[RMDB]
RNA sequence: GGGAACGACUCGAGUAGAGUCGAAAAGAAUCACCGUACCUAUUUAGGCUUACGCUCCAAGAUCGGUGGAUAGCAGCCCUAUCAAUAUCUAGGAGAACUGUGCUAUGUUUAGAAGAUUAGGUAGUCUAUUACACAGCCAUGUUCGCAUGGCUGUGAACAACAUCCGAAAGUUCGCUUUCGGAUGUUGAAAAGAAACAACAACAACAAC
Reactivity to 2A3 in 0.01 (KOAc 150mM, MgCl2 10mM, bicine 150mM(pH8.5), 24C), signal-to-noise 3, nucleotides 027 to 156: g050a030a050u060c010a000c070c020g020u040a020c020c000u090a100u130u130u210a010g010g020c010u030u050a030c050g020c020u030c000c010a030a070g020a070u040c050g070g060u070g050g040a020u030a020g020c010a020g010c010c020c000u040a030u050c030a100a080u040a030u160c040u050a070g000g040a020g030a050a040c030u070g020u050g050c040u060a020u130g110u030u100u030a070g020a150a030g010a150u110u040a030g000g060u010a020g030u040c040u050a080u060u200a080c010a000c000a000g000c000c000a000u010g040u060u060c130g010c100a000u010g000g000c000u000g000u000g000a000a000
Reactivity to DMS in 0.01 (KOAc 150mM, MgCl2 10mM, bicine 150mM(pH8.5), 24C), signal-to-noise 2, nucleotides 027 to 156: g010a130a120u010c010a180c010c010g030u010a080c010c020u000a240u000u020u000a050g040g000c030u000u000a100c120g000c030u000c010c020a070a060g000a050u000c050g030g050u010g030g020a080u010a090g010c050a140g000c100c080c020u000a120u000c020a070a120u000a060u000c040u000a130g000g010a070g010a080a100c050u000g010u000g010c020u000a050u000g010u010u010u010a100g020a130a100g000a080u000u000a050g010g020u000a090g030u010c030u000a090u010u000a160c010a020c000a020g040c000c000a020u000g030u000u020c240g000c020a030u000g010g000c010u000g000u000g030a010a100